[RMDB]
RNA sequence: GGGAACGACUCGAGUAGAGUCGAAAAAGAGGCGCGUACGCGCGCCUCAGGCGAUGAUGAGGCCUCGAUUGGCUGAAUCGAUGAUUGAGAGGGACUUGGCUGAGCACAGCGAUCUACGGAUCGCUGACUAGCGUGAGUAGUUCGCUACUCACGCUAGAAAAGAAACAACAACAACAAC
Reactivity to 2A3 in 0.01 (KOAc 150mM, MgCl2 10mM, bicine 150mM(pH8.5), 24C), signal-to-noise 3, nucleotides 027 to 126: a000g010a020g010g020c020g010c020g000u050a020c210g000c000g000c000g000c060c000u000c000a010g010g000c010g070a130u110g000a030u040g040a050g020g040c010c030u040c080g170a170u130u220g010g010c010u040g000a050a000u040c030g040a060u140g020a020u010u300g050a060g000a070g030g030g000a020c030u060u070g030g000c030u050g020a020g060c050a030c000a050g000c010g000a000u000c030u050a030c160g090g010a010u000c000g000c000u000g000a010
Reactivity to DMS in 0.01 (KOAc 150mM, MgCl2 10mM, bicine 150mM(pH8.5), 24C), signal-to-noise 3, nucleotides 027 to 126: a120g030a020g000g010c000g120c060g010u010a070c170g040c030g010c020g050c000c010u020c010a030g000g010c050g000a080u030g000a020u020g000a240g010g000c060c000u000c300g000a170u060u020g020g000c000u010g030a100a010u000c040g000a070u040g030a080u020u010g000a050g000a110g000g000g000a060c070u000u000g010g020c030u020g010a090g010c110a190c030a000g060c010g000a000u000c000u020a190c120g080g000a000u000c010g010c000u000g000a050